This 207-nucleotide RNA was probed chemically with 2A3. The RNA was probed in 150 mM KOAc, 10 mM MgCl2 and 150 mM bicine (pH 8.5) at 24 C.
[RMDB]
RNA sequence: GGGAACGACUCGAGUAGAGUCGAAAACUGCCGCCGGGACGCAGUGAUCCUCGCAGGGUCGCACGGUCGCCUCGGGUCGGCCUCGUGUCGGCUCGAACUGCGAGGGGAGCGAGUGGCGAGCCCGACCAAAACUUUCUCGCCUUCGGGCGAGAAAGAACAUAUCGACCAACUUCGGUUGGUCGAUAUGAAAAGAAACAACAACAACAAC
Reactivity to 2A3 in 0.01 (KOAc 150mM, MgCl2 10mM, bicine 150mM(pH8.5), 24C), signal-to-noise 1, nucleotides 027 to 156: c030u010g050c020c000g000c000c020g060g060g130a060c020g000c020a130g140u000g010a020u000c000c000u030c000g020c060a010g000g070g110u130c040g020c050a070c120g030g050u080c000g010c000c000u050c010g020g000g000u060c010g000g000c000c040u150c190g220u280g000u020c000g010g000c000u010c020g030a100a050c020u000g000c010g000a010g010g000g000g000a010g010c020g010a110g080u100g020g000c010g010a040g020c040c030c000g030a050c020c040a000a040a020a080c000u000u000u020c000u010c000g000c000c020u000u030c150g090g000g000c000g000a010g000a000a000a000g010a010a010
About this RNA: 2A3 adducts were read by reverse transcription with SuperScript II with manganese.